[RMDB]
RNA sequence: GGGAACGACUCGAGUAGAGUCGAAAAGAUAUGGAGUGGCAGCGAGCUGCAGGGUCGGAAACGACCCUAUAGCGAUGAGCUGCGUAACAUCUCCUAAGUCAAACUGUCGCAGUUCGCUGCGACAGAAUCAACAUCAACUGUUCGCAGUUGAUGUUGAAAAAGAAACAACAACAACAAC
Reactivity to 2A3 in 0.01 (KOAc 150mM, MgCl2 10mM, bicine 150mM(pH8.5), 24C), signal-to-noise 2, nucleotides 027 to 126: g010a010u010a010u050g000g000a000g000u010g010g000c000a000g000c000g040a040g000c000u010g030c010a000g000g000g000u000c000g000g000a000a010a000c000g000a000c000c000c000u010a000u010a000g000c010g080a170u250g000a030g000c000u000g000c010g000u020a070a030c020a090u070c010u000c030c000u010a030a010g000u020c000a080a060a120c020u010g000u000c000g000c010a000g020u060u160c280g130c140u010g000c000g000a000c000a000g020a000a070
Reactivity to DMS in 0.01 (KOAc 150mM, MgCl2 10mM, bicine 150mM(pH8.5), 24C), signal-to-noise 4, nucleotides 027 to 126: g000a020u000a040u000g000g000a030g040u010g000g000c000a000g030c010g000a030g030c000u000g010c060a000g000g000g000u000c000g010g010a010a010a040c000g010a000c000c000c000u000a000u000a000g030c010g000a160u030g000a060g010c020u000g000c000g010u010a060a160c070a040u010c000u000c000c000u010a010a100g000u000c010a110a120a240c000u000g000u000c000g010c000a010g000u000u010c220g000c010u000g000c000g010a000c000a000g000a050a070
The data come from the RNA Mapping Database (RMDB), library TTRDEL. The record gives the reactivity of an RNA of 177 nucleotides to 2A3 and DMS. The DMS profile rests on 6,217 reads. The reactions ran in a buffer of 150 mM KOAc, 10 mM MgCl2 and 150 mM bicine (pH 8.5), at 24 C. For DMS the reverse transcriptase was MarathonRT.